[RMDB]
This 177-nucleotide RNA was probed chemically with 2A3 and DMS. For 2A3 the reverse transcriptase was SuperScript II with manganese. Conditions: 150 mM KOAc, 10 mM MgCl2 and 150 mM bicine (pH 8.5), 24 C.
RNA sequence: GGGAACGACUCGAGUAGAGUCGAAAACGACUUUUUGAUUUUGGAUAGGUUCAGACUUCGUGUGUCCUUUAUGUUUUUUUCUGAAUCGUAAUGAAGGGGUGCCAAAACAAAGGGUGGUUCGAAGCUGCGAUAAGAUUAGAUUCGUCUAAUUUUAUCGAAAAGAAACAACAACAACAAC
Reactivity to 2A3 in 0.01 (KOAc 150mM, MgCl2 10mM, bicine 150mM(pH8.5), 24C), signal-to-noise 5, nucleotides 027 to 126: c020g010a010c010u020u020u000u020u030g120a170u010u020u010u030g030g020a030u030a100g010g000u010u010c000a000g010a030c020u040u030c070g030u050g010u010g020u020c000c000u030u070u030a100u020g100u050u010u030u030u030u020u000c010u010g010a000a010u000c000g020u140a030a040u130g010a030a010g000g000g000g000u030g030c000c000a010a030a010a000c020a000a010a010g030g000g000u020g010g030u010u020c020g040a020a020g010c030u030g010
Reactivity to DMS in 0.01 (KOAc 150mM, MgCl2 10mM, bicine 150mM(pH8.5), 24C), signal-to-noise 7, nucleotides 027 to 126: c050g000a050c040u000u010u010u000u000g000a130u000u000u010u000g000g000a090u030a060g010g000u000u000c000a020g000a060c100u020u010c060g010u010g000u010g000u010c020c010u000u030u030a050u020g010u000u000u000u000u010u010u010c020u000g000a070a040u000c030g000u030a070a070u020g000a040a020g000g000g000g000u010g000c020c020a010a010a020a020c020a010a020a030g000g000g010u000g000g010u010u000c040g000a050a050g000c130u010g010